[RMDB]
RNA sequence: GGGAACGACUCGAGUAGAGUCGAAAACAACACGUCUUCGGACGUGUUGAAACGUGGUGCGUACGAUAACGCAUAUAAAGCCCAAGACAUGCAGGGCAAAAAAAACAACCAGCUUCGGCUGGUUGAAGGCUAUUGUUAUGUUCGCAUAACAAUAGCCAAAAGAAACAACAACAACAAC
Reactivity to 2A3 in 0.01 (KOAc 150mM, MgCl2 10mM, bicine 150mM(pH8.5), 24C), signal-to-noise 1, nucleotides 027 to 126: c010a000a000c000a000c010g020u040c020u070u130c180g090g000a000c000g000u000g000u020u000g000a010a010a000c000g010u040g110g020u010g040c000g000u000a010c020g020a080u030a030a030c000g010c020a010u010a010u000a030a050a020g010c000c010c000a080a070g170a040c070a070u180g000c010a160g000g000g000c000a030a000a000a000a000a000a000a010c010a030a000c010c020a000g020c000u050u090c090g230g000c000u000g040g000u010u000g000a000a000
Reactivity to DMS in 0.01 (KOAc 150mM, MgCl2 10mM, bicine 150mM(pH8.5), 24C), signal-to-noise 1, nucleotides 027 to 126: c020a000a020c000a010c000g010u000c000u030u000c300g000g020a020c000g000u000g020u000u000g010a040a090a230c030g000u010g050g010u000g000c010g000u000a050c040g000a080u000a000a040c030g030c000a010u000a050u020a050a090a220g080c000c000c000a060a100g000a210c200a030u000g040c190a140g030g000g000c040a020a000a000a030a010a000a070a020c010a000a000c000c000a000g000c000u000u000c300g060g000c000u000g000g010u000u000g000a010a050